The record gives the reactivity of an RNA of 177 nucleotides to DMS and 2A3. The DMS profile rests on 1,238 reads. The data come from the RNA Mapping Database (RMDB), library OK2TRN. DMS adducts were read by reverse transcription with MarathonRT. Reactivities are given for positions 27 through 126.
RNA sequence: GGGAACGACUCGAGUAGAGUCGAAAAGGAGGAGUUCUAAAUAGAUACUGUUCCCUUCACGACGCCGACUAGGCGUAUAAUACAUUACAGUAUCUAGGAUGGGAAGGGAGGUCCUAUGGAACUCAGAGGUACGUGGUUCAUUCGUGAACCACGUACCAAAAGAAACAACAACAACAAC
Reactivity to DMS in 0.01 (KOAc 150mM, MgCl2 10mM, bicine 150mM(pH8.5), 24C), signal-to-noise 2, nucleotides 027 to 126: g010g020a150g020g000a080g000u000u000c020u000a000a120a200u000a000g010a020u020a010c000u000g000u000u010c030c000c000u000u000c100a100c130g000a050c010g010c000c010g010a220c300u010a120g030g050c000g030u000a000u010a110a090u000a030c160a090u000u020a050c040a050g010u000a000u000c020u000a050g020g020a210u040g010g000g020a090a060g000g020g000a040g010g000u000c090c020u000a100u000g000g000a030a040c030u010c010a120g010a170
Reactivity to 2A3 in 0.01 (KOAc 150mM, MgCl2 10mM, bicine 150mM(pH8.5), 24C), signal-to-noise 2, nucleotides 027 to 126: g120g080a080g020g040a020g000u020u040c020u040a080a070a080u020a010g010a000u010a020c000u010g090u130u130c010c000c000u030u020c090a100c070g070a000c010g000c000c020g130a220c240u190a090g000g000c000g010u010a010u030a010a000u070a010c050a010u150u180a030c020a060g000u010a010u000c010u030a030g060g040a050u100g000g010g010a000a070g010g050g000a030g020g020u030c000c000u010a060u040g030g000a030a010c020u020c030a000g010a010